RNA sequence: GGGAACGACUCGAGUAGAGUCGAAAAAGCGAUGAUACGUCAUCGCAACGAUUGCCCGAUCGUAAAACAGGAGACGGCCGUGGCCGCGACCACGUAAAAAAGCGUAACGUGGUCUACGGACCACGAAAAAAGCGCGGAACGUUCGCGUUCCGCGCAAUCGUUUUCUAAAGUUCGCUUUAGAAAACGAAAAAGAAACAACAACAACAAC
Reactivity to 2A3 in 0.01 (KOAc 150mM, MgCl2 10mM, bicine 150mM(pH8.5), 24C), signal-to-noise 1, nucleotides 027 to 156: a000g020c010g000a020u010g010a020u030a080c160g090u000c000a000u010c000g000c010a000a020c000g020a030u010u080g020c000c030c010g030a030u020c000g040u070a040a020a110a130c060a150g140g030a090g100a120c150g060g000c030c000g010u000g000g050c050c000g010c000g010a010c010c000a010c000g010u030a000a010a000a040a040a000g000c010g030u030a040a010c010g000u010g020g000u020c010u030a070c210g030g010a060c010c000a000c000g000a000a010a000a000a010a010g010c000g000c000g000g020a000a000c000g020u060u080c190g000c000g070u030u000c010c020g010c000g010c010a000a000
The record gives the reactivity of an RNA of 207 nucleotides to 2A3. For 2A3, 1,177 sequencing reads were counted.